[RMDB]
RNA sequence: GGGAACGACUCGAGUAGAGUCGAAAACUUGAUGCUGAAUACAUAAUCCACCCUACUGAGUCUCAGUAGUUUGGUGGCAGUCUUAUACACUAUGGUAAGCCUGUAAUUAAAUAGUAUAAGCAAUGUUUCUCUGAAUACCGUUCGCGGUAUUCAGAGAAAAAGAAACAACAACAACAAC
Reactivity to 2A3 in 0.01 (KOAc 150mM, MgCl2 10mM, bicine 150mM(pH8.5), 24C), signal-to-noise 2, nucleotides 027 to 126: c080u000u140g130a020u060g090c000u010g040a100a000u030a000c030a030u130a000a050u140c000c000a000c000c060c000u000a010c000u020g050a080g300u130c110u050c180a010g000u000a050g010u090u130u140g000g000u000g000g020c030a010g000u000c000u000u010a020u100a010c110a050c100u260a170u270g080g000u000a000a030g000c000c000u040g000u060a170a020u060u170a040a050a120u100a000g000u040a000u000a030a000g000c010a010a120u090g020u010u030
An RNA of 177 nucleotides, treated with 2A3 and read out base by base. For 2A3 the reverse transcriptase was SuperScript II with manganese. It was measured as part of the RMDB library RFM100. Values cover nucleotides 27 to 126.